The record gives the reactivity of an RNA of 177 nucleotides to 2A3 and DMS. Conditions: 150 mM KOAc, 10 mM MgCl2 and 150 mM bicine (pH 8.5), 24 C.

RNA sequence: GGGAACGACUCGAGUAGAGUCGAAAAACAAUGGGCGAAAGCCUGAUGCAGCGACGCCGCGUGAGGGAUGACGGCCUUCGGGUUGUAAACCUCUUUCAGCAGGGAAGAAGCGAAAGUGACGGUACCAAAUUUAAUAAAAAUUCGUUUUUAUUAAAUUAAAAGAAACAACAACAACAAC
Reactivity to 2A3 in 0.01 (KOAc 150mM, MgCl2 10mM, bicine 150mM(pH8.5), 24C), signal-to-noise 4, nucleotides 027 to 126: a000c060a040a150u110g010g020g000c020g050a130a040a020g020c000c010u030g030a040u090g010c020a020g000c010g060a060c040g040c060c010g030c020g040u060g020a010g030g030g010a060u300g020a040c000g010g010c000c000u040u060c130g080g000g000u020u060g000u020a010a040a010c000c000u000c000u000u060u070c020a020g000c010a030g020g040g030a060a120g030a080a010g050c020g050a110a000a020g070u070g020a030c040g000g030u060a060c010c000a050
Reactivity to DMS in 0.01 (KOAc 150mM, MgCl2 10mM, bicine 150mM(pH8.5), 24C), signal-to-noise 5, nucleotides 027 to 126: a090c100a080a070u030g010g000g020c000g010a130a070a170g010c020c000u030g000a060u020g020c050a050g000c050g010a090c060g010c040c050g000c120g020u020g000a020g000g000g000a070u030g010a180c290g000g000c010c000u010u060c140g020g000g030u000u010g030u010a020a290a250c040c000u010c010u000u010u020c080a070g010c040a080g010g000g010a080a080g000a100a110g010c030g000a040a070a100g020u010g010a120c030g000g010u010a080c050c030a050

Annotation
It was measured as part of the RMDB library OK1LIB. The 2A3 profile rests on 3,268 reads.